[RMDB]
Chemical mapping of a 177-nucleotide RNA with DMS and 2A3. The data come from the RNA Mapping Database (RMDB), library RFMREP. The RNA was probed in 150 mM KOAc, 10 mM MgCl2 and 150 mM bicine (pH 8.5) at 24 C. For DMS the reverse transcriptase was MarathonRT.

RNA sequence: GGGAACGACUCGAGUAGAGUCGAAAAAGAGGAAGGAAGCAUGGUAGUGUGCACGGAGAUUCACCACAAGGUCUGCAUGUCUGCCUGCAGUGACGCCUUCGGGCUUUGAUCUCGCGGGCCUGGAUUUUAAUAAACGUAACUUCGGUUACGUUUAUUAAAAAGAAACAACAACAACAAC
Reactivity to DMS in 0.01 (KOAc 150mM, MgCl2 10mM, bicine 150mM(pH8.5), 24C), signal-to-noise 4, nucleotides 027 to 126: a060g010a080g010g000a070a070g010g010a090a090g020c050a040u000g020g010u000a050g020u010g000u000g010c060a070c120g010g000a070g010a110u010u010c060a080c050c050a090c170a120a110g010g010u000c030u000g000c020a040u010g000u000c030u000g000c020c020u000g020c020a060g010u000g000a110c210g010c070c030u000u010c070g020g000g000c020u000u000u010g000a070u000c030u000c130g030c050g000g000g000c030c060u000g010g000a130u010u000u000
Reactivity to 2A3 in 0.01 (KOAc 150mM, MgCl2 10mM, bicine 150mM(pH8.5), 24C), signal-to-noise 1, nucleotides 027 to 126: a000g100a060g020g030a020a020g030g000a050a020g060c030a030u130g100g000u040a050g000u030g040u030g090c040a010c080g040g000a060g010a050u130u110c040a010c060c010a030c050a060a040g070g020u010c010u040g000c010a040u060g050u070c010u040g040c020c010u000g000c020a010g000u020g060a020c040g000c030c000u000u020c050g000g000g000c000u150u070u160g020a040u070c010u000c070g000c000g040g000g000c010c030u040g010g050a070u000u050u020